[RMDB]
RNA sequence: GGGAACGACUCGAGUAGAGUCGAAAAUCCGGAUACUCGGAAAUCGGCAGCAGGAACAUCGCGAUCAUCCCGGCGAGCAGGAUGAUGACCGACAGCACCCCUGCGAAGAUCGGUCGAUCGAUGAAGAACUAGUGAUAAUGUUCGCAUUAUCACUAGUAAAAGAAACAACAACAACAAC
Reactivity to DMS in 0.01 (KOAc 150mM, MgCl2 10mM, bicine 150mM(pH8.5), 24C), signal-to-noise 9, nucleotides 027 to 126: u000c010c000g020g010a190u010a090c100u000c030g010g000a060a100a060u000c040g010g010c020a110g000c020a030g000g010a120a100c090a120u000c030g000c060g010a100u000c030a040u000c020c010c030g010g010c130g010a120g010c050a110g020g000a040u000g010a040u010g010a130c300c010g000a030c070a100g020c100a120c150c070c010c030u000g010c040g000a110a100g000a090u010c100g010g000u000c040g000a050u000c050g010a200u010g010a090a100g010a120
Reactivity to 2A3 in 0.01 (KOAc 150mM, MgCl2 10mM, bicine 150mM(pH8.5), 24C), signal-to-noise 8, nucleotides 027 to 126: u010c010c000g000g050a190u190a170c070u050c040g010g040a020a030a070u040c020g020g000c020a040g000c000a010g040g010a050a030c020a050u040c020g000c020g060a020u030c000a010u020c010c010c000g040g070c100g040a050g070c040a030g020g010a010u040g010a020u040g030a040c010c020g020a020c010a020g020c040a090c010c050c000c000u010g000c010g020a050a010g050a080u040c040g020g040u020c020g010a030u040c010g030a030u070g060a040a070g040a060
Conditions: 150 mM KOAc, 10 mM MgCl2 and 150 mM bicine (pH 8.5), 24 C. Chemical mapping of a 177-nucleotide RNA with DMS and 2A3. The 2A3 profile rests on 25,551 reads. DMS adducts were read by reverse transcription with MarathonRT. Reactivities are given for positions 27 through 126. For DMS, 21,604 sequencing reads were counted.